[RMDB]
RNA sequence: GGGAACGACUCGAGUAGAGUCGAAAAGAAAAGAGCGUAAUCGCGUCUUGACGUGAGUGAGACUAGACUGUAGCCUAUCCCAAGUGGGAUAGCAUACCUCACAAUACGCUGAUCUACAGUCAAAAGACAGUCAGUGAGUCUUCGGACUCACUGACUGAAAAGAAACAACAACAACAAC
Reactivity to DMS in 0.01 (KOAc 150mM, MgCl2 10mM, bicine 150mM(pH8.5), 24C), signal-to-noise 1, nucleotides 027 to 126: g000a090a000a090a010g020a110g000c000g060u040a050a300u000c110g020c050g020u080c030u000u020g000a090c050g000u000g020a080g000u000g000a000g000a300c110u000a050g000a060c000u010g000u000a000g000c300c000u000a000u000c000c000c000a180a100g010u150g000g050g000a040u170a000g000c300a030u000a090c140c000u000c070a000c190a130a130u000a000c010g040c010u000g080a060u080c000u000a000c000a000g030u000c000a180a060a080a080g000a200
Reactivity to 2A3 in 0.01 (KOAc 150mM, MgCl2 10mM, bicine 150mM(pH8.5), 24C), signal-to-noise 2, nucleotides 027 to 126: g190a000a150a010a010g020a000g000c030g000u030a030a030u070c010g030c000g020u020c080u110u180g230a020c020g000u000g030a000g030u020g010a020g010a050c040u060a070g000a000c000u010g000u000a000g020c000c000u000a010u000c020c030c030a080a150g300u300g030g000g000a010u000a000g000c010a040u040a060c020c000u000c000a000c000a010a020u030a030c030g000c000u030g060a060u000c000u000a000c000a000g010u000c010a000a000a060a000g160a010